[RMDB]
RNA sequence: GGGAACGACUCGAGUAGAGUCGAAAAGAUAUGGAUGCGUGUGGACAUGUGCCCAGGUCGGAAACGACCUGAAGCACAACAGCCAUUAUCGCAUCCUAAGUCAAAGCGCUCAGUUCGCUGAGCGCAAGUAUGUUGAGAUGUUCGCAUCUCAACAUACAAAAGAAACAACAACAACAAC
Reactivity to 2A3 in 0.01 (KOAc 150mM, MgCl2 10mM, bicine 150mM(pH8.5), 24C), signal-to-noise 5, nucleotides 027 to 126: g010a010u020a020u080g000g000a010u010g010c010g000u030g010u010g020g010a080c160a300u300g010u000g000c000c000c010a000g010g010u000c010g020g000a050a030a020c000g000a010c020c000u000g000a000a000g040c000a000c010a190a170c040a060g010c000c000a040u240u230a140u300c000g010c000a000u000c000c000u010a020a000g010u000c030a080a150a080g010c010g000c000u000c000a010g030u120u130c240g040c170u000g010a010g000c000g000c000a000a010
Reactivity to DMS in 0.01 (KOAc 150mM, MgCl2 10mM, bicine 150mM(pH8.5), 24C), signal-to-noise 4, nucleotides 027 to 126: g000a000u000a190u010g000g020a010u010g010c000g050u000g020u010g010g010a040c090a210u000g010u000g020c020c080c010a020g000g000u010c000g010g000a040a050a100c000g020a010c000c000u000g010a070a270g000c000a010c010a060a060c300a190g000c000c000a030u000u010a060u020c010g010c010a010u000c010c010u000a020a080g010u000c040a100a120a180g010c000g000c000u000c010a000g010u000u010c290g020c010u000g010a010g010c000g020c010a010a020